[RMDB]
RNA sequence: GGGAACGACUCGAGUAGAGUCGAAAAUUGUAACCAACGGCAUAAGCUAAUCGCGCAUUAAUGCCGCGCGACCAUAGAAAACUCGCCACCACUUGUGCUUGACGCGUUGUCAACGCUUGCUGGCGCAAUGAUGAGGGCGAUUCGUCGCCCUCAUCAUAAAAGAAACAACAACAACAAC
Reactivity to 2A3 in 0.01 (KOAc 150mM, MgCl2 10mM, bicine 150mM(pH8.5), 24C), signal-to-noise 1, nucleotides 027 to 126: u170u030g060u070a000a090c000c020a060a120c100g000g000c000a040u050a300a120g000c090u070a300a080u090c010g000c010g030c010a000u090u090a180a020u060g040c000c010g000c000g020c000g000a010c040c120a050u190a240g140a040a060a050a030c060u090c050g010c020c000a040c030c000a050c040u040u040g010u030g090c100u040u060g060a010c000g080c040g300u040u120g110u070c080a000a000c030g010c040u000u040g000c040u010g000g040c020g080c040a050
Reactivity to DMS in 0.01 (KOAc 150mM, MgCl2 10mM, bicine 150mM(pH8.5), 24C), signal-to-noise 2, nucleotides 027 to 126: u000u000g050u010a230a210c020c000a120a150c060g010g000c020a120u000a020a080g020c110u010a050a100u000c110g020c030g020c050a070u000u010a200a020u000g020c130c120g000c020g010c030g000a050c050c040a150u020a060g000a020a070a040a060c140u000c030g010c000c020a070c050c120a080c120u010u010g010u010g010c140u000u000g000a090c100g010c220g000u030u020g000u000c060a060a020c050g020c000u000u000g000c200u020g020g000c050g020c170a020
Description: The record gives the reactivity of an RNA of 177 nucleotides to 2A3 and DMS. The RNA was probed in 150 mM KOAc, 10 mM MgCl2 and 150 mM bicine (pH 8.5) at 24 C. For DMS the reverse transcriptase was MarathonRT. Source: RMDB library OK2TST, as collected in RNAgym.